This 177-nucleotide RNA was probed chemically with 2A3 and DMS. Values cover nucleotides 27 to 126. For 2A3, 3,217 sequencing reads were counted. The reactions ran in a buffer of 150 mM KOAc, 10 mM MgCl2 and 150 mM bicine (pH 8.5), at 24 C. DMS adducts were read by reverse transcription with MarathonRT. 2A3 is a SHAPE reagent: it acylates the 2'-hydroxyl of flexible nucleotides of all four kinds.
RNA sequence: GGGAACGACUCGAGUAGAGUCGAAAAGAUAUGGAAUCGCAAUGAGCAACAGCCACACGGGUCGGAAACGACCUGUGGACAUGCUCAGCGAUUCCUAAGUCAAAACUGAUGUGUUCGCACAUCAGAACACUCGUUCACUCUUCGGAGUGAACGAGUGAAAAGAAACAACAACAACAAC
Reactivity to 2A3 in 0.01 (KOAc 150mM, MgCl2 10mM, bicine 150mM(pH8.5), 24C), signal-to-noise 2, nucleotides 027 to 126: g000a000u030a000u070g000g020a000a020u020c010g040c170a210a300u300g000a010g000c090a080a170c110a300g010c020c010a070c000a050c220g220g000g000u040c000g030g000a030a000a000c000g040a020c000c010u030g000u010g000g010a000c000a230u300g000c000u000c000a000g000c030g000a000u010u000c000c000u000a010a000g000u010c010a020a030a160a250c000u020g000a000u000g010u000g020u100u080c300g020c120a000c000a000u000c000a000g010a030a010
Reactivity to DMS in 0.01 (KOAc 150mM, MgCl2 10mM, bicine 150mM(pH8.5), 24C), signal-to-noise 1, nucleotides 027 to 126: g010a020u010a140u000g040g000a010a020u010c000g040c000a140a150u000g000a010g000c010a190a080c300a120g000c020c060a090c000a060c270g010g000g040u000c000g030g000a020a040a110c000g000a020c000c000u020g040u000g000g000a000c060a150u000g020c030u010c010a030g010c000g000a010u000u010c020c000u000a000a020g000u010c040a120a070a160a300c010u000g000a040u000g010u000g040u000u000c250g000c000a000c000a000u000c010a000g020a090a170